Description
Structure probing data (2A3) for a 307-nucleotide construct. Source: RMDB library POS240, as collected in RNAgym.
RNA sequence: GGGAACGACUCGAGUAGAGUCGAAAAGCUUAAGCGUUCGCGCUUAAGCACUACAUCUACGGAUGUAGAAACAAAAAGAAAAAACAUAAGUAGGCCAGCUUCGGCUGGCCACGCGUAACUACGGUUACGCGAGGCGGAACGUUCGCGUUCCGCCACGUCAGUGCUACGGCACUGACGAGAGGUCUCUACGGAGACCUCAAGAUGGUAUCGUGAGAUACCAUCAACGGGUGCAACUCCCGCCCCUCUUCCGAGGGUCAUCGGAACCUAGCGAUGAGUUCGCUCAUCGCAAAAGAAACAACAACAACAAC
Reactivity to 2A3 in 0.01 (KOAc 150mM, MgCl2 10mM, bicine 150mM(pH8.5), 24C), signal-to-noise 3, nucleotides 027 to 266: g000c000u010u000a000a010g000c010g060u060u200c300g030c010g000c240u010u010a000a000g000c000a000c000u000a000c000a000u010c000u030a050c260g150g000a000u010g000u010a000g100a050a090a010c050a020a060a030a020a020g190a070a120a050a040a020a000c140a050u300a080a040g140u190a080g080g000c020c010a010g000c020u070u100c200g080g000c010u000g000g000c050c060a020c010g000c000g000u000a000a010c000u010a010c230g090g000u000u000a000c010g000c000g010a020g010g010c000g000g000a000a000c000g010u080u080c190g020c000g130u000u000c000c000g000c010c000a000c000g000u000c000a000g000u000g000c010u010a070c220g120g000c000a000c000u000g000a000c000g000a030g000a000g000g000u000c000u000c000u020a030c270g100g000a000g000a000c000c000u010c000a000a020g010a000u000g000g010u000a000u010c010g010u030g040a050g000a020u000a000c000c000a000u000c000a000a010c000g000g000g010u020g030c010a020a010c060u020c010c000c010g040c010c000c030c000u110c070u060u000c010c000g020a010g020g010g050u060c030a020u000c000g010g010a010a020c010c050u070a060